Conditions: 150 mM KOAc, 10 mM MgCl2 and 150 mM bicine (pH 8.5), 24 C. Chemical mapping of a 177-nucleotide RNA with DMS. The DMS profile rests on 804 reads. Source: RMDB library OK2TST, as collected in RNAgym.
RNA sequence: GGGAACGACUCGAGUAGAGUCGAAAAGCUGUUGAUUGUAUGAGUGAUUUUAUGAGUGAGAUUAAGUGUAAAACACAAUCUAUAGCACCACCUACUGGUGUUUAUGAAUUAAACGGUUACACUGUUCCGAUGGCAAGUACUUCGGUACUUGCCAUCGAAAAGAAACAACAACAACAAC
Reactivity to DMS in 0.01 (KOAc 150mM, MgCl2 10mM, bicine 150mM(pH8.5), 24C), signal-to-noise 1, nucleotides 027 to 126: g030c000u000g060u020u010g000a160u000u000g000u000a060u000g000a120g030u020g000a150u010u000u000u000a090u000g020a130g010u000g000a120g020a090u000u000a040a020g040u000g010u000a010a010a050a140c030a120c150a040a030u000c000u000a060u000a000g000c030a010c000c000a070c230c300u000a090c300u000g000g010u000g000u000u000u010a040u000g000a070a050u010u000a010a110a200c220g000g000u000u000a010c000a050c010u000g000u000u000c060